[RMDB]
RNA sequence: GGGAACGACUCGAGUAGAGUCGAAAAAGGCUACGCGCUCACCAGGUUUUCAGCCCUAUGAUACUGCCCAACUUCGGGGCGAGAGUGUCCAGCAGCGCGUGGCUAAAGCGGUCGCGUCUCCAACGCCCUCCGACUUAAAGUUCGCUUUAAGUCGGAGAAAAGAAACAACAACAACAAC
Reactivity to DMS in 0.01 (KOAc 150mM, MgCl2 10mM, bicine 150mM(pH8.5), 24C), signal-to-noise 2, nucleotides 027 to 126: a110g000g010c000u000a000c000g000c020g010c000u000c070a140c140c110a130g010g010u000u000u000u000c070a200g000c050c010c010u010a080u000g000a120u000a100c210u000g000c030c040c010a070a110c180u010u020c130g020g010g000g020c010g000a050g030a060g010u000g010u010c040c050a090g020c110a010g010c010g000c000g000u000g000g020c010u000a020a060a090g000c110g000g000u000c030g010c030g000u000c030u000c010c070a110a120c080g000c080c060
Reactivity to 2A3 in 0.01 (KOAc 150mM, MgCl2 10mM, bicine 150mM(pH8.5), 24C), signal-to-noise 2, nucleotides 027 to 126: a000g030g000c010u000a010c010g000c010g000c020u000c010a100c040c070a040g040g010u000u020u030u180c080a080g020c000c010c000u080a110u160g040a030u050a110c070u180g000c010c010c040a070a040c060u160u120c070g000g010g000g000c030g000a020g030a020g010u070g080u050c050c060a010g020c060a000g000c050g000c000g030u010g000g000c000u010a050a000a020g070c030g050g030u120c040g000c030g070u010c010u020c040c010a070a020c030g010c020c000